RNA sequence: GGGAACGACUCGAGUAGAGUCGAAAAAAUCCGCUACAGCAGGAUCGAAGUCCUCAUAGAGGCUCUAACUUGUGGAGUCUGCCCUAUGUAAGUGGUGUUGAGAGUUGGGCCCCACGCAAUGGAAACCUGUGAACCUCGUCAGGUCCGGAAGGAAGCAGUAAGCUACUAUGUUCGCAUAGUAGCUUACAAAAGAAACAACAACAACAAC
Reactivity to 2A3 in 0.01 (KOAc 150mM, MgCl2 10mM, bicine 150mM(pH8.5), 24C), signal-to-noise 2, nucleotides 027 to 156: a000a040u040c040c010g020c040u130a100c070a100g060c010a010g000g010a030u080c070g070a100a070g070u030c000c010u000c060a040u070a050g090a090g080g000c000u000c030u070a200a190c030u090u170g000u130g130g000a000g000u040c050u020g020c040c000c000u140a150u110g050u090a100a130g050u020g020g000u070g000u010u220g080a130g020a010g050u060u080g000g000g000c000c000c000c000a020c020g040c030a000a030u040g020g060a020a060a130c000c000u020g000u010g060a020a100c020c030u040c080g100u040c050a000g000g100u000c000c000g060g000a060a040g060g040a040a010g040c040a000
Reactivity to DMS in 0.01 (KOAc 150mM, MgCl2 10mM, bicine 150mM(pH8.5), 24C), signal-to-noise 2, nucleotides 027 to 156: a090a040u010c040c030g000c010u000a090c080a140g030c080a090g040g010a050u000c010g000a180a130g010u000c020c010u010c010a090u000a120g000a170g060g030c030u000c000u000a060a060c090u010u010g010u000g000g000a100g020u000c030u000g000c050c010c000u000a100u000g000u000a090a030g040u000g000g000u010g020u000u010g000a120g010a110g010u010u000g030g030g010c010c000c020c030a060c080g000c090a050a140u020g020g000a120a050a080c050c000u000g000u000g000a140a090c010c010u010c090g000u000c060a050g020g040u000c020c000g000g010a140a080g010g010a050a070g020c050a170
Chemical mapping of a 207-nucleotide RNA with 2A3 and DMS. The reactions ran in a buffer of 150 mM KOAc, 10 mM MgCl2 and 150 mM bicine (pH 8.5), at 24 C. The 2A3 profile rests on 667 reads.